[RMDB]
Chemical mapping of a 207-nucleotide RNA with DMS and 2A3.
RNA sequence: GGGAACGACUCGAGUAGAGUCGAAAAUUACGUUUCGACGUAACAAAUGGGGUCAUUGGAGGGUCCCAGCAACAGCUAUACUGAAGCCUCCACGGUAUAGACAUGCAGGGACCCUGUGAAGAUGACGGAGGCACCCGAAAUACCUUUUCGAAGGUAAUGAUAUAAGUGAGUUCGCUCACUUAUAUCAAAAAGAAACAACAACAACAAC
Reactivity to DMS in 0.01 (KOAc 150mM, MgCl2 10mM, bicine 150mM(pH8.5), 24C), signal-to-noise 2, nucleotides 027 to 156: u000u000a000c050g010u000u020u010c190g030a140c000g000u000a050a050c030a070a130a120u000g000g010g000g010u000c010a040u000u000g020g010a030g060g030g000u000c000c000c000a200g020c000a040a100c110a110g000c000u000a010u000a030c000u000g000a040a170g000c000c010u000c000c030a260c000g000g000u000a030u000a010g010a050c060a230u000g020c010a160g010g000g010a010c010c020c020u020g000u010g000a130a250g010a040u020g010a020c010g020g040a060g090g030c020a130c010c000c030g000a070a110a170u000a030c010c000u000u000u000u000c170g020a020a020g000g040u010a040a190
Reactivity to 2A3 in 0.01 (KOAc 150mM, MgCl2 10mM, bicine 150mM(pH8.5), 24C), signal-to-noise 4, nucleotides 027 to 156: u030u000a010c010g010u010u070u190c220g100a010c000g000u000a040a010c040a070a210a090u130g030g000g060g000u010c010a000u000u020g040g030a000g020g010g000u000c000c000c000a010g020c010a010a230c050a070g130c000u000a000u000a000c000u010g050a140a030g020c010c000u030c000c010a000c000g000g000u010a000u010a000g210a250c070a090u080g000c040a100g000g000g000a000c000c010c000u000g020u000g000a010a000g020a010u030g010a000c020g020g010a010g000g000c020a050c000c010c010g050a060a050a060u110a040c040c000u040u040u060u140c190g080a010a000g020g000u040a030a080
Notes
For DMS, 4,706 sequencing reads were counted.